[RMDB]
RNA sequence: GGGAACGACUCGAGUAGAGUCGAAAAGAAUCUGAAGAAGAUACCCUCUUCAUCAAACAGAUGGUAGAGAAAUGUGUAACGUCUCAGGAAUUGGUGGAGAAAGUGUUGAAGAUACUGUUUAAAGAUUUGUUCAAGAGUGGAGAAUACAAAGAUUACAAACGAUAACAGUUUUCGAACUGUUAUCGUUAAAAGAAACAACAACAACAAC
Reactivity to 2A3 in 0.01 (KOAc 150mM, MgCl2 10mM, bicine 150mM(pH8.5), 24C), signal-to-noise 3, nucleotides 027 to 156: g030a020a070u040c030u070g030a050a020g040a040a010g000a120u050a040c020c000c000u000c000u000u000c010a060u000c010a050a070a210c060a040g020a060u050g050g100u180a020g010a000g000a020a080a070u160g020u020g020u050a090a030c040g050u000c020u000c080a040g060g090a100a070u130u060g030g020u030g010g030a010g010a040a100a060g050u080g000u040u080g020a040a020g010a030u030a060c010u030g070u100u090u140a070a080a010g040a060u040u070u100g030u010u070c040a030a000g050a010g070u040g020g040a040g020a030a030u100a050c050a030a100a020g120a040u160u160a050c290a190
Reactivity to DMS in 0.01 (KOAc 150mM, MgCl2 10mM, bicine 150mM(pH8.5), 24C), signal-to-noise 3, nucleotides 027 to 156: g010a100a120u010c040u000g000a120a130g000a150a130g010a080u000a150c030c050c030u010c000u000u000c000a050u010c010a100a120a180c120a140g020a060u010g010g010u000a040g010a130g000a060a150a120u000g020u000g020u000a090a070c090g010u010c000u000c040a070g020g000a080a150u010u040g020g010u000g000g010a140g000a070a040a100g000u000g010u000u000g000a060a040g020a090u000a060c040u010g020u000u000u000a050a100a130g000a130u010u010u010g020u000u020c040a050a070g000a050g010u000g020g010a080g000a060a100u020a130c060a060a080a110g000a140u010u010a060c070a090